[RMDB]
RNA sequence: GGGAACGACUCGAGUAGAGUCGAAAAACGGACUACCGUCCGAAGGGUUCGGGGUACUAGUGUGAAUGCCCGGCUAGUACCCUGUGCUAGUGGUUUAUCUACUGAUGUUCAAUUAAGGGCAUUUGAAAAAAGACUCCUAACUUCGGUUAGGAGUCAACAGAGUUUAAAAGUUCGCUUUUAAACUCUGAAAAGAAACAACAACAACAAC
Reactivity to 2A3 in 0.01 (KOAc 150mM, MgCl2 10mM, bicine 150mM(pH8.5), 24C), signal-to-noise 1, nucleotides 027 to 156: a000c020g020g030a000c040u130a120c090c140g050u030c010c020g030a050a030g140g010g010u160u300c010g000g000g000g000u000a000c000u000a000g010u010g000u010g130a040a000u030g000c000c000c000g000g000c000u000a000g000u000a000c020c000c000u030g050u090g000c020u030a050g030u010g130g000u000u270u220a130u090c030u010a000c000u000g160a180u130g150u160u140c170a070a110u160u190a270a300g000g020g020c000a000u030u000u030g030a030a000a000a000a000a030g010a000c000u000c000c000u020a030a030c000u050u030c020g000g000u000u000a000g000g010a000g000u000c010a000a000
Reactivity to DMS in 0.01 (KOAc 150mM, MgCl2 10mM, bicine 150mM(pH8.5), 24C), signal-to-noise 1, nucleotides 027 to 156: a080c050g010g020a040c000u010a110c210c100g000u010c020c000g020a130a100g030g010g020u000u020c040g000g020g050g040u000a000c000u010a000g000u000g010u000g010a090a100u000g020c010c010c030g010g010c010u000a020g020u000a000c000c010c030u000g020u000g030c030u010a100g020u000g020g000u000u000u000a090u020c020u010a200c050u010g000a110u000g000u020u020c030a080a210u010u000a090a130g050g000g020c000a030u000u000u030g010a000a070a090a060a080a180g010a020c010u000c000c000u000a010a000c000u020u020c290g030g010u010u010a030g000g020a020g030u000c000a000a030
Description
An RNA of 207 nucleotides, treated with 2A3 and DMS and read out base by base. It was measured as part of the RMDB library M2RFPK. Reactivities are given for positions 27 through 156. High DMS reactivity at an A or C suggests that its Watson-Crick edge is free.